An RNA of 177 nucleotides, treated with DMS and read out base by base.
RNA sequence: GGGAACGACUCGAGUAGAGUCGAAAACGUGCUAGAUACAAUGACCUUGUCCCGCGCAUUUACCGUUGUGUCGAAAUAAGGCGUAAGCCUGUGAACCAUUAUAAGCGAUUGAUUGUGUGCUGAGUGGCAAAAGCCACUCCUUCGGGAGUGGCUUUUGAAAAGAAACAACAACAACAAC
Reactivity to DMS in 0.01 (KOAc 150mM, MgCl2 10mM, bicine 150mM(pH8.5), 24C), signal-to-noise 3, nucleotides 027 to 126: c100g010u010g000c040u010a100g010a070u000a020c050a040a040u000g020a110c100c070u000u000g010u000c030c020c060g010c100g010c030a050u010u010u000a060c100c040g020u000u010g000u000g000u000c030g010a070a100a080u010a070a030g010g000c020g000u020a070a140g010c000c000u000g030u000g010a060a140c050c030a050u000u000a090u010a110a060g010c020g010a070u010u000g010a110u000u000g010u000g010u010g000c020u000g000a060g010u000g000g000
For DMS, 2,901 sequencing reads were counted. The reactions ran in a buffer of 150 mM KOAc, 10 mM MgCl2 and 150 mM bicine (pH 8.5), at 24 C.